[RMDB]
RNA sequence: GGGAACGACUCGAGUAGAGUCGAAAAGAUAUGGAGUGUGUCUAACGACAUGACCGGGUGGUCGGAAACGACCACCUGGUCAACAGCGUUAGAGCACACUCCUAAGUCAAACAGACGUUCGCGUCUGCGUAGUAUCAUUCUUCGGAAUGAUACUACGAAAAGAAACAACAACAACAAC
Reactivity to 2A3 in 0.01 (KOAc 150mM, MgCl2 10mM, bicine 150mM(pH8.5), 24C), signal-to-noise 8, nucleotides 027 to 126: g050a020u080a070u210g010g010a010g010u010g000u000g020u000c000u000a010a000c010g190a100c060a100u110g000a000c000c010g010g010g000u000g000g010u010c020g020g050a120a090a040c010g000a000c010c000a000c000c000u000g000g000u000c000a000a000c000a000g030c000g010u000u010a000g030a040g030c000a000c000a000c000u000c000c000u000a010a010g010u010c030a090a060a080c000a010g010a010c010g030u080u100c300g040c020g130u010c000u020g050
Reactivity to DMS in 0.01 (KOAc 150mM, MgCl2 10mM, bicine 150mM(pH8.5), 24C), signal-to-noise 9, nucleotides 027 to 126: g000a040u000a300u000g000g000a020g020u000g010u000g010u000c000u000a000a010c000g010a060c100a270u000g010a010c000c000g000g010g030u000g000g010u010c000g010g010a080a120a240c010g010a010c000c000a000c010c000u000g000g010u000c000a010a030c240a210g010c010g010u000u000a010g000a090g000c000a010c000a000c000u010c000c000u000a010a080g000u000c040a120a110a290c010a010g000a000c000g020u000u010c240g030c020g010u000c000u000g000
This 177-nucleotide RNA was probed chemically with 2A3 and DMS. DMS adducts were read by reverse transcription with MarathonRT. 2A3 is a SHAPE reagent: it acylates the 2'-hydroxyl of flexible nucleotides of all four kinds. For DMS, 22,289 sequencing reads were counted. It was measured as part of the RMDB library TTRDES.